[RMDB]
This 177-nucleotide RNA was probed chemically with DMS and 2A3. Values are in units of 0.01, from 0 to 300, in steps of 10. 2A3 is a SHAPE reagent: it acylates the 2'-hydroxyl of flexible nucleotides of all four kinds.

RNA sequence: GGGAACGACUCGAGUAGAGUCGAAAAUUAAAGCACGCGAAGCACGCGAAGCACAUGAACCACAUGAAGCACUACAAGCAGUACAAGCACGGCAAGCAGUAGAAGCAGUACAAGCAGCCGAAAAAAACGAUUAGGACAAGUUCGCUUGUCCUAAUCGAAAAGAAACAACAACAACAAC
Reactivity to DMS in 0.01 (KOAc 150mM, MgCl2 10mM, bicine 150mM(pH8.5), 24C), signal-to-noise 2, nucleotides 027 to 126: u000u000a140a110a120g000c070a060c090g000c060g020a100a100g020c130a080c040g020c110g010a100a070g010c030a070c060a040u020g020a030a100c010c010a100c040a030u000g010a020a120g020c050a030c070u020a040c100a040a090g000c030a020g000u000a050c040a100a090g010c020a070c020g000g020c060a010a120g020c050a070g000u010a010g000a050a070g000c070a030g000u020a030c050a020a000g000c030a140g010c020c060g020a000a010a030a050a090a050a120
Reactivity to 2A3 in 0.01 (KOAc 150mM, MgCl2 10mM, bicine 150mM(pH8.5), 24C), signal-to-noise 1, nucleotides 027 to 126: u110u070a120a020a000g040c020a050c060g100c030g090a070a010g030c050a000c040g040c030g040a090a010g010c020a000c010a050u020g010a100a030c000c010a020c000a030u150g050a080a000g000c020a010c110u040a040c030a020a110g020c000a010g050u070a010c000a070a040g000c050a000c030g000g010c000a050a000g000c030a000g000u120a040g010a030a020g010c030a000g020u090a060c060a080a000g070c000a020g060c000c000g160a170a020a010a000a000a020a000